Chemical mapping of a 177-nucleotide RNA with 2A3 and DMS.
Values cover nucleotides 27 to 126.
Conditions: 150 mM KOAc, 10 mM MgCl2 and 150 mM bicine (pH 8.5), 24 C.
It was measured as part of the RMDB library OK1LIB.

RNA sequence: GGGAACGACUCGAGUAGAGUCGAAAAAUGCUCAAUUUGUCGGCAACUGAUAAAGAAUCCGUAUUGUCACAAAUGUCAGAUGUGUUAUUUCAAAAUGGGUUCGUGAAGUCAACGUUUAAAGAUGCAGGCGUGAGAGAAUAUUCGUAUUCUCUCACGCAAAAGAAACAACAACAACAAC
Reactivity to 2A3 in 0.01 (KOAc 150mM, MgCl2 10mM, bicine 150mM(pH8.5), 24C), signal-to-noise 5, nucleotides 027 to 126: a000u100g000c010u000c070a020a050u060u010u090g020u060c040g030g030c020a030a030c050u020g030a020u090a230a260a090g120a030a020u010c000c000g020u090a060u080u130g040u020c000a000c010a010a090a080u160g100u190c060a060g040a130u040g030u000g050u060u120a140u070u150u100c050a020a050a000a030u070g020g010g010u020u050c070g020u050g050a020a010g010u030c020a060a000c050g000u000u040u130a110a070a000g090a020u150g050c050a030g110
Reactivity to DMS in 0.01 (KOAc 150mM, MgCl2 10mM, bicine 150mM(pH8.5), 24C), signal-to-noise 3, nucleotides 027 to 126: a060u040g010c010u010c040a060a120u010u000u000g020u020c110g010g010c100a080a050c060u000g000a080u020a090a100a120g000a070a020u000c000c000g020u000a070u000u010g000u000c030a030c010a020a080a050u000g000u020c180a110g000a110u020g000u030g020u010u030a100u000u010u020c040a020a060a030a130u010g000g020g000u030u010c010g000u020g000a060a120g000u000c040a070a120c110g000u000u010u020a070a080a120g000a080u010g030c030a100g000